[RMDB]
RNA sequence: GGGAACGACUCGAGUAGAGUCGAAAAUAAUGCCACUUCGGUGGCAUUAGCAGGUACGAAAGCCCUAUCAACUACAAAAUCCCAAACAACAAGAUAGGCAAAUAAUGCAUAGCUUCGGCUAUGCAAAUAGUUGCAAUAGAUUCGUCUAUUGCAACUAAAAAGAAACAACAACAACAAC
Reactivity to DMS in 0.01 (KOAc 150mM, MgCl2 10mM, bicine 150mM(pH8.5), 24C), signal-to-noise 6, nucleotides 027 to 126: u000a020a000u000g010c000c000a010c000u000u020c170g040g020u000g000g000c000a000u000u000a010g010c140a070g010g010u010a100c190g000a060a060a070g030c130c010c010u000a010u000c010a080a080c080u000a060c080a070a060a110a100u010c000c010c010a060a090a080c140a050a080c200a060a120g000a020u000a000g010g010c050a120a080a060u010a080a100u000g000c000a000u000a010g010c000u000u010c230g020g000c000u000a000u000g000c000a000a010a050
Reactivity to 2A3 in 0.01 (KOAc 150mM, MgCl2 10mM, bicine 150mM(pH8.5), 24C), signal-to-noise 6, nucleotides 027 to 126: u030a000a000u010g000c000c000a010c010u040u040c190g110g010u000g080g000c000a000u000u000a000g000c020a020g060g180u150a030c080g150a170a040a030g050c000c000c000u010a010u010c010a030a080c020u130a070c100a030a180a030a090u040c000c010c000a040a080a070c080a050a020c020a080a000g000a020u010a000g000g000c010a010a040a010u230a060a060u070g010c000a000u000a000g000c010u040u030c170g090g000c000u000a000u000g010c000a000a000a000